The record gives the reactivity of an RNA of 177 nucleotides to 2A3. Values cover nucleotides 27 to 126. The RNA was probed in 150 mM KOAc, 10 mM MgCl2 and 150 mM bicine (pH 8.5) at 24 C. For 2A3 the reverse transcriptase was SuperScript II with manganese.
RNA sequence: GGGAACGACUCGAGUAGAGUCGAAAAAAGGACGCGGCAAGCUGCGAAAAGCCUCGGGAAGCUGCAAGCAAGCGAUGAUCCGGGGAUAUCCGAAUGGGGUAACCUGAUCGAGGCAAUACUCGAUCGUGUCCAAUGAUGACUUCGGUCAUCAUUGGACAAAAGAAACAACAACAACAAC
Reactivity to 2A3 in 0.01 (KOAc 150mM, MgCl2 10mM, bicine 150mM(pH8.5), 24C), signal-to-noise 1, nucleotides 027 to 126: a000a000g060g000a000c000g020c010g000g000c040a000a000g000c010u000g020c030g040a000a000a020a000g110c000c000u000c000g020g020g020a030a000g020c000u030g000c000a020a010g050c000a010a000g000c000g140a160u010g000a000u010c000c000g000g000g010g000a000u000a030u040c000c000g020a010a090u170g000g000g010g040u070a080a100c000c020u040g010a050u000c000g000a010g040g020c150a160a070u120a190c000u000c000g000a010u000c000g000u030